[RMDB]
RNA sequence: GGGAACGACUCGAGUAGAGUCGAAAAGGGAGCGAGUUCGCUCGCUCCCAAACCCGAUGAAGCGGCACAUACGGAGCUUCAUACAUCUAAGAAGUGCAAUAAAAAGCGGUAGCUUCGGCUACCGCAAUCAAAUCUCAAAGUUCGCUUUGAGAUUUGAAAAAGAAACAACAACAACAAC
Reactivity to 2A3 in 0.01 (KOAc 150mM, MgCl2 10mM, bicine 150mM(pH8.5), 24C), signal-to-noise 1, nucleotides 027 to 126: g000g000g050a000g010c010g010a000g010u030u030c060g040c050u010c000g020c000u030c030c000c000a000a000a000c000c010c000g000a030u030g000a010a000g000c030g060g100c110a050c010a130u300a100c180g130g040a030g000c000u030u030c040a030u060a020c070a040u130c100u160a100a040g040a120a030g180u050g020c020a070a040u210a180a100a020a020a030g020c010g000g030u010a010g000c020u010u050c170g050g020c000u000a000c010c000g000c010a000a000
Reactivity to DMS in 0.01 (KOAc 150mM, MgCl2 10mM, bicine 150mM(pH8.5), 24C), signal-to-noise 2, nucleotides 027 to 126: g000g000g000a010g020c030g020a010g030u000u000c230g020c000u000c000g040c000u010c000c000c000a010a020a050c020c010c000g030a060u000g000a020a030g010c010g000g040c030a050c050a140u000a210c170g050g000a180g000c030u000u000c000a030u000a090c090a040u000c130u000a120a120g000a100a120g040u010g010c040a140a080u020a060a100a080a150a140g000c020g030g000u000a020g000c000u000u000c240g000g020c000u000a000c000c010g020c000a000a010
Record summary
This 177-nucleotide RNA was probed chemically with 2A3 and DMS. The DMS profile rests on 1,525 reads. The RNA was probed in 150 mM KOAc, 10 mM MgCl2 and 150 mM bicine (pH 8.5) at 24 C. 2A3 adducts were read by reverse transcription with SuperScript II with manganese.